[RMDB]
RNA sequence: GGGAACGACUCGAGUAGAGUCGAAAAUUUUUGUAGAGAUGAGGUCUCAUCAUGUUGCCCAGGCUGGUCUCGAACUCCUGGUCUCAAGUGAUUGUCCUGCCGUGGCCUCUCAAAAUGCUGAGAUUAGGGAUAUAUGUGAUUUCGAUCACAUAUAUCCAAAAGAAACAACAACAACAAC
Reactivity to DMS in 0.01 (KOAc 150mM, MgCl2 10mM, bicine 150mM(pH8.5), 24C), signal-to-noise 5, nucleotides 027 to 126: u000u010u010u010u010g010u000a100g020a220g000a070u010g020a070g020g010u000c040u000c030a040u000c050a050u000g000u010u000g010c220c010c010a050g000g010c140u000g010g010u000c040u000c110g010a110a090c050u000c010c010u000g000g000u000c060u000c040a040a100g010u000g000a040u000u010g010u010c020c030u000g000c050c050g020u000g000g010c020c030u000c010u000c020a030a050a110a080u010g020c070u000g010a060g000a100u000u000a090g010
Reactivity to 2A3 in 0.01 (KOAc 150mM, MgCl2 10mM, bicine 150mM(pH8.5), 24C), signal-to-noise 3, nucleotides 027 to 126: u040u030u020u050u070g080u070a050g000a010g010a140u150g080a030g060g040u000c020u010c060a030u020c000a020u070g070u100u050g020c030c000c020a010g060g000c090u090g020g060u040c040u020c130g010a050a020c020u000c010c010u020g040g000u010c030u020c040a070a050g040u020g050a070u070u100g040u050c020c010u040g040c000c030g040u020g020g000c000c000u000c010u010c000a040a060a040a060u120g040c030u040g020a030g010a130u050u140a110g080